[RMDB]
RNA sequence: GGGAACGACUCGAGUAGAGUCGAAAAAAAAAAAGAUAUGGACGCAUCGAUCGUAUGUAAGGACAACAGCACGCUCGGAAACGAGCGUGACAUGUCCUGAGUACGGGAGCGUCCUAAGUCAAAAAAACAAUACUUAAGGGUUCGCCCUUAAGUAUUGAAAAGAAACAACAACAACAAC
Reactivity to DMS in 0.01 (KOAc 150mM, MgCl2 10mM, bicine 150mM(pH8.5), 24C), signal-to-noise 5, nucleotides 027 to 126: a000a000a040a090a040a050a050g000a030u010a300u000g010g010a010c010g020c000a240u000c170g020a080u020c010g010u000a000u000g000u020a300a060g010g000a010c010a040a080c240a130g000c000a000c010g000c000u000c000g000g010a110a070a140c000g010a010g010c000g030u010g010a010c060a120u000g000u000c000c000u000g000a220g010u000a020c000g000g000g000a030g020c000g010u000c000c000u000a010a050g000u010c010a010a000a050a060a040a050a160
Reactivity to 2A3 in 0.01 (KOAc 150mM, MgCl2 10mM, bicine 150mM(pH8.5), 24C), signal-to-noise 3, nucleotides 027 to 126: a000a030a010a010a000a030a090g100a080u200a050u150g000g000a000c010g000c040a220u300c080g160a090u120c000g020u000a010u070g110u220a030a010g010g020a010c010a150a030c030a150g050c000a010c000g000c020u020c010g040g030a030a080a080c020g000a000g010c020g000u000g000a000c000a020u020g000u000c000c010u010g010a010g000u000a000c000g010g010g000a020g020c000g000u000c000c010u000a030a000g030u020c030a110a060a000a010a010a060a130

This 177-nucleotide RNA was probed chemically with DMS and 2A3. Source: RMDB library TTRDES, as collected in RNAgym. For 2A3 the reverse transcriptase was SuperScript II with manganese. For DMS, 9,416 sequencing reads were counted. The RNA was probed in 150 mM KOAc, 10 mM MgCl2 and 150 mM bicine (pH 8.5) at 24 C.